[RMDB]
RNA sequence: GGGAACGACUCGAGUAGAGUCGAAAAGAUAUGGAUCACUGUGGAGAAGGGCAGGGUCGGAAACGACCCGAUGCUUCUAUGAAGCAGUGAGUCCUAAGUCAAAGGGCCUCAGUUCGCUGAGGCCCAAUCAAACCAGGUAGUUCGCUACCUGGUUUGAAAAAGAAACAACAACAACAAC
Reactivity to DMS in 0.01 (KOAc 150mM, MgCl2 10mM, bicine 150mM(pH8.5), 24C), signal-to-noise 2, nucleotides 027 to 126: g010a010u000a020u000g000g000a140u000c000a010c010u000g000u000g000g010a030g020a020a030g000g010g020c190a090g000g020g010u000c000g020g010a010a010a020c000g000a010c000c010c000g010a030u040g000c000u000u000c010u000a170u020g000a180a220g000c000a000g020u000g000a020g020u000c000c000u010a000a060g000u000c020a090a160a190g010g000g020c000c000u000c000a000g000u000u010c240g000c000u000g000a010g000g000c000c010c000a010a020

The data come from the RNA Mapping Database (RMDB), library TTRDEL. This 177-nucleotide RNA was probed chemically with DMS.